The data come from the RNA Mapping Database (RMDB), library OK3TST. Structure probing data (2A3 and DMS) for a 207-nucleotide construct. DMS adducts were read by reverse transcription with MarathonRT. The 2A3 profile rests on 989 reads. For 2A3 the reverse transcriptase was SuperScript II with manganese. 2A3 is a SHAPE reagent: it acylates the 2'-hydroxyl of flexible nucleotides of all four kinds. The DMS profile rests on 2,462 reads. The RNA was probed in 150 mM KOAc, 10 mM MgCl2 and 150 mM bicine (pH 8.5) at 24 C.

[RMDB]
RNA sequence: GGGAACGACUCGAGUAGAGUCGAAAAUUGACGUAAGCGCCGAGGACGUAUAUCAGGCCCACCGAAAGCGUGUGAAAGACGCCGCUGAUUUGGGGUGGUCUGUCUCGCAAGAAGAGGUGCCGGUCGAUACGGGGAAACUCAAGCAGUCGGGGUUUCCUAUUAGGCUACAAUUCGUUGUAGCCUAAUAAAAAGAAACAACAACAACAAC
Reactivity to 2A3 in 0.01 (KOAc 150mM, MgCl2 10mM, bicine 150mM(pH8.5), 24C), signal-to-noise 2, nucleotides 027 to 156: u090u030g010a030c040g020u070a140a170g040c010g010c100c020g030a110g070g050a070c040g100u140a140u040a050u220c010a000g000g000c020c000c000a010c010c000g070a100a020a010g020c020g010u170g030u040g160a290a140a040g070a040c050g040c000c000g080c040u020g190a290u080u060u200g050g010g010g000u130g040g000u000c000u010g000u010c000u020c030g040c040a050a130g100a090a020g040a100g040g030u050g100c080c040g030g000u030c010g010a010u050a050c040g000g000g000g040a000a010a010c010u010c000a000a120g020c050a040g080u070c090g000g020g010g000u000u020u010c000c000
Reactivity to DMS in 0.01 (KOAc 150mM, MgCl2 10mM, bicine 150mM(pH8.5), 24C), signal-to-noise 1, nucleotides 027 to 156: u010u010g010a060c060g030u010a170a160g010c010g020c000c010g050a250g000g010a060c010g010u000a080u000a070u000c020a050g010g000c020c010c010a040c000c000g020a060a100a140g040c040g000u010g020u000g010a120a120a140g020a130c020g070c000c010g030c030u010g000a240u010u040u010g030g000g000g040u000g000g040u000c020u010g010u000c090u000c040g010c020a090a150g000a140a180g010a300g030g010u010g000c000c050g010g020u000c010g000a100u000a020c060g040g000g010g010a040a040a060c000u010c010a040a150g010c000a060g010u000c020g000g000g020g000u000u000u000c000c020